[RMDB]
RNA sequence: GGGAACGACUCGAGUAGAGUCGAAAACAGAAAUACUAUUUCAAGAAAGAGUGGCACAGAUUUAUAGACACAAUCACCCAGCAUAUGGUGGAAGUGCCAGUGAUCACAGCUGACGGGGAAGUGUACACUUUCGUCGUUCAUUCGUGAACGACGAAAGAAAAGAAACAACAACAACAAC
Reactivity to DMS in 0.01 (KOAc 150mM, MgCl2 10mM, bicine 150mM(pH8.5), 24C), signal-to-noise 1, nucleotides 027 to 126: c140a280g030a060a050a030u010a080c110u000a080u000u000u000c050a130a120g000a110a200a040g010a020g050u050g070g000c000a100c090a120g000a030u000u040u050a160u000a060g000a130c100a050c000a130a060u050c100a040c070c000c060a070g050c050a070u030a000u000g000g000u000g020g000a160a150g000u000g000c000c060a060g000u000g000a070u030c040a050c140a130g000c050u000g000a050c060g000g000g030g040a020a020g020u000g000u070a040c230a200
Reactivity to 2A3 in 0.01 (KOAc 150mM, MgCl2 10mM, bicine 150mM(pH8.5), 24C), signal-to-noise 2, nucleotides 027 to 126: c050a000g130a000a080a030u110a040c140u090a040u150u190u030c090a090a050g020a130a090a010g050a060g000u050g000g010c140a000c000a030g140a060u010u080u000a030u010a020g110a030c070a000c150a120a120u090c030a000c090c000c010a040g070c020a150u070a240u230g080g000u120g000g060a150a120g020u030g100c000c070a000g130u100g070a000u140c000a000c060a040g050c000u030g000a080c020g010g000g010g000a050a040g070u040g050u050a080c000a000

Chemical mapping of a 177-nucleotide RNA with DMS and 2A3. Values cover nucleotides 27 to 126. Conditions: 150 mM KOAc, 10 mM MgCl2 and 150 mM bicine (pH 8.5), 24 C. The 2A3 profile rests on 566 reads. For DMS, 1,124 sequencing reads were counted. The data come from the RNA Mapping Database (RMDB), library OK1LIB.